[RMDB]
RNA sequence: GGGAACGACUCGAGUAGAGUCGAAAAGUGCGCCGAUUUUCUUACCGGAGCUGGUUUGGACAACCAAGAGGCUGCCAUACUGAACCUAGGUAGAGCAGAGGCUCUCAAGAAGGAGGUUGGCGACACCCCUGUUACCCAAUUUCGAUUGGGUAACAGGAAAAGAAACAACAACAACAAC
Reactivity to 2A3 in 0.01 (KOAc 150mM, MgCl2 10mM, bicine 150mM(pH8.5), 24C), signal-to-noise 1, nucleotides 027 to 126: g040u080g040c000g000c010c000g000a000u090u000u000u000c000u000u020a060c030c030g010g000a020g020c020u040g020g100u020u030u120g110g030a050c030a070a030c030c000a040a050g100a080g230g000c000u000g000c000c010a090u040a050c000u040g060a180a100c010c060u050a080g000g030u020a000g000a010g010c020a000g010a050g050g030c010u000c030u030c010a090a200g050a010a000g030g000a000g020g000u010u010g010g030c000g030a020c000a040c000c010
Reactivity to DMS in 0.01 (KOAc 150mM, MgCl2 10mM, bicine 150mM(pH8.5), 24C), signal-to-noise 2, nucleotides 027 to 126: g020u000g000c010g000c000c000g000a010u000u000u000u000c000u010u000a090c080c210g000g010a050g010c090u010g030g000u000u000u010g000g050a270c210a080a030c000c010a110a280g010a220g000g020c010u000g000c000c030a110u000a030c020u000g000a130a190c140c190u000a170g010g010u010a010g000a300g010c000a060g000a080g010g020c000u000c000u000c050a080a100g010a040a010g010g000a000g000g000u010u000g000g010c010g010a100c010a130c030c060
Source: RMDB library OK2TST, as collected in RNAgym. An RNA of 177 nucleotides, treated with 2A3 and DMS and read out base by base. Reactivities are given for positions 27 through 126. The RNA was probed in 150 mM KOAc, 10 mM MgCl2 and 150 mM bicine (pH 8.5) at 24 C. For DMS the reverse transcriptase was MarathonRT. 2A3 adducts were read by reverse transcription with SuperScript II with manganese.